[RMDB]
RNA sequence: GGGAACGACUCGAGUAGAGUCGAAAAGCUGCCUCUGACGUCCUUCUCCCCCGGAAACGGGGCCGAAGGGUGGUAAAGCGGGUCGCCUGGCGCUGGCACGGGUAUGCGUGGUGGUCGACCCUGGCCGCACUCGAGCAGUAUUCGUACUGCUCGAGUGAAAAGAAACAACAACAACAAC
Reactivity to DMS in 0.01 (KOAc 150mM, MgCl2 10mM, bicine 150mM(pH8.5), 24C), signal-to-noise 2, nucleotides 027 to 126: g010c070u010g000c030c030u000c040u010g000a120c080g030u000c000c000u010u000c000u010c300c000c020c000c010g010g000a080a100a200c010g000g000g010g020c040c080g030a020a000g010g000g020u000g010g000u000a030a100a100g010c100g000g040g010u000c050g000c010c020u000g000g000c040g000c010u000g000g010c040a080c100g010g010g010u000a040u020g010c000g020u000g020g020u000g000g000u000c020g000a050c020c000c030u000g000g020c020c100g010
Reactivity to 2A3 in 0.01 (KOAc 150mM, MgCl2 10mM, bicine 150mM(pH8.5), 24C), signal-to-noise 1, nucleotides 027 to 126: g000c010u020g010c000c020u030c060u080g100a060c000g020u010c010c000u020u050c010u010c000c000c000c010c010g000g000a010a010a010c000g010g000g000g000c020c000g030a000a000g030g000g000u010g000g070u080a040a100a060g090c100g000g000g010u020c020g000c010c010u020g090g030c050g010c040u070g160g030c120a090c170g140g030g100u250a100u160g030c020g000u090g070g290u080g020g000u210c020g000a040c010c010c000u010g060g010c000c000g000
This 177-nucleotide RNA was probed chemically with DMS and 2A3. For DMS the reverse transcriptase was MarathonRT. 2A3 adducts were read by reverse transcription with SuperScript II with manganese. The 2A3 profile rests on 1,824 reads.